[RMDB]
RNA sequence: GGGAACGACUCGAGUAGAGUCGAAAAGCAAGAGCGUUCGCGCUCUUGCAAAGAAAAUGCGUCCAAAGGGUGAGGAUGGGAUGGACGCAAAACCCACACCCAAAACACUCUGCUUCGGCAGAGUGAACAAAGUAAUAAGGUUCGCCUUAUUACUUUGAAAAGAAACAACAACAACAAC
Reactivity to DMS in 0.01 (KOAc 150mM, MgCl2 10mM, bicine 150mM(pH8.5), 24C), signal-to-noise 8, nucleotides 027 to 126: g000c000a000a000g010a010g030c000g030u000u010c190g030c010g010c010u000c000u000u000g000c000a020a050a110g000a080a060a090a090u000g000c010g000u000c010c010a050a120a190g010g000g010u000g010a090g010g010a120u010g000g010g010a260u000g000g010a010c000g000c000a000a020a070a090c010c000c010a130c120a080c030c010c020a080a080a090a150c010a010c000u000c000u000g000c000u000u010c180g010g010c000a000g000a010g010u000g010a050a110
Reactivity to 2A3 in 0.01 (KOAc 150mM, MgCl2 10mM, bicine 150mM(pH8.5), 24C), signal-to-noise 7, nucleotides 027 to 126: g000c000a000a000g010a010g000c020g040u090u100c170g020c010g040c120u000c000u000u000g000c000a000a010a000g010a000a080a010a030u050g000c010g000u000c010c010a080a090a070g090g030g050u110g040a080g090g050a120u140g040g010g050a050u050g010g000a000c000g000c000a010a020a040a050c010c010c000a030c010a020c010c020c000a030a080a020a020c000a000c000u010c000u000g000c010u030u050c120g110g000c000a000g000a000g000u000g000a010a010

The record gives the reactivity of an RNA of 177 nucleotides to DMS and 2A3. For DMS, 13,301 sequencing reads were counted. The RNA was probed in 150 mM KOAc, 10 mM MgCl2 and 150 mM bicine (pH 8.5) at 24 C. Values are in units of 0.01, from 0 to 300, in steps of 10.